[RMDB]
An RNA of 177 nucleotides, treated with DMS and read out base by base. Conditions: 150 mM KOAc, 10 mM MgCl2 and 150 mM bicine (pH 8.5), 24 C.
RNA sequence: GGGAACGACUCGAGUAGAGUCGAAAACGCAUGGUUUGGAGAGAGUGGUGCAAUGUCUGUGGCAUAAAAGAUGUUGUUCUACAAGGCUUAAAAGCUUGUUGUUACGUGGGUGUGCAAACUGUUGAAGGAUUACCGAAGGGUUCGCCCUUCGGUAAUCAAAAGAAACAACAACAACAAC
Reactivity to DMS in 0.01 (KOAc 150mM, MgCl2 10mM, bicine 150mM(pH8.5), 24C), signal-to-noise 1, nucleotides 027 to 126: c100g000c090a070u020g010g040u000u000u000g020g010a160g020a120g020a080g040u000g010g010u000g000c000a070a070u000g010u000c040u000g030u000g010g000c070a090u020a040a110a070a030g000a040u020g000u000u000g000u010u010c040u000a080c130a050a050g000g010c030u000u000a070a080a060a130g020c040u000u000g010u000u000g010u000u020a040c100g000u010g020g010g020u000g010u000g010c080a070a030a080c080u000g030u000u000g010a160a110g000